[RMDB]
RNA sequence: GGGAACGACUCGAGUAGAGUCGAAAACUUGCUGCCCAUAUAGCGCUCGGUGACCUUGUCGAUAGCAAUGUGGUAAGGCAUCAGCAGAUGGGCGUCGGCGGAGAUCAACAGCUUGGCGGUGUCCACGGGUAGCGGACGAGUUCGCUCGUCCGCUACCAAAAGAAACAACAACAACAAC
Reactivity to 2A3 in 0.01 (KOAc 150mM, MgCl2 10mM, bicine 150mM(pH8.5), 24C), signal-to-noise 2, nucleotides 027 to 126: c000u040u250g030c050u210g000c000c000c030a000u000a020u100a050g160c060g000c010u020c240g030g000u100g020a300c000c000u010u050g000u000c020g160a040u020a040g140c060a140a190u240g120u150g090g040u000a010a010g000g000c050a000u010c000a000g010c000a000g080a130u050g030g000g020c050g030u020c070g000g070c020g040g000a060g000a030u110c040a060a130c000a030g010c010u080u040g000g000c020g000g060u060g050u020c010c080a040c040g030

The record gives the reactivity of an RNA of 177 nucleotides to 2A3. 2A3 is a SHAPE reagent: it acylates the 2'-hydroxyl of flexible nucleotides of all four kinds. Conditions: 150 mM KOAc, 10 mM MgCl2 and 150 mM bicine (pH 8.5), 24 C. For 2A3, 520 sequencing reads were counted.